Source: RMDB library OK3TST, as collected in RNAgym.
An RNA of 207 nucleotides, treated with DMS and 2A3 and read out base by base.
Reactivities are given for positions 27 through 156.

RNA sequence: GGGAACGACUCGAGUAGAGUCGAAAAGGCCAGGAUGGGAAAGCAUGCUCAAGGCCUCCGCCGUAACGCCAGGAUGGGAAAGCAUGCGCGCGGUCUGAUAGCGAAGGAUGGGAAAGCAUGCGGAUGGGAAAGCAUGCCCAUCCGAAACGUACGCCGGCUUCACUUAUUCAUUCGUGAAUAAGUGAAGAAAAGAAACAACAACAACAAC
Reactivity to DMS in 0.01 (KOAc 150mM, MgCl2 10mM, bicine 150mM(pH8.5), 24C), signal-to-noise 2, nucleotides 027 to 156: g040g000c020c020a040g010g030a110u000g010g010g000a120a090a070g020c020a050u000g000c010u000c040a060a210g010g020c040c050u000c030c030g020c030c030g010u010a080a090c130g010c020c030a300g020g020a090u030g020g020g000a090a120a130g010c040a080u000g000c000g040c070g020c010g000g020u000c020u000g020a180u020a060g000c040g010a210a170g000g000a080u000g010g030g030a150a080a120g040c020a050u000g010c030g010g010a080u010g050g010g000a150a110a220g020c090a070u020g010c030c000c000a020u010c000c010g000a020a030a050c050g010u000a120c040g000c020c010g020g040
Reactivity to 2A3 in 0.01 (KOAc 150mM, MgCl2 10mM, bicine 150mM(pH8.5), 24C), signal-to-noise 5, nucleotides 027 to 156: g020g010c020c010a040g080g010a060u090g030g040g070a090a100a050g000c010a020u060g000c000u020c100a110a070g060g000c000c020u010c000c010g000c010c020g090u140a090a070c050g020c070c040a040g060g010a070u080g050g000g050a050a020a080g010c020a000u040g020c020g010c030g000c030g000g020u050c040u080g090a120u110a060g020c060g030a070a010g020g020a020u040g010g020g010a060a090a030g030c020a010u040g010c050g030g050a090u130g050g000g090a040a080a040g020c020a010u070g000c000c000c000a000u000c010c000g010a040a010a000c020g010u050a050c030g020c020c010g040g000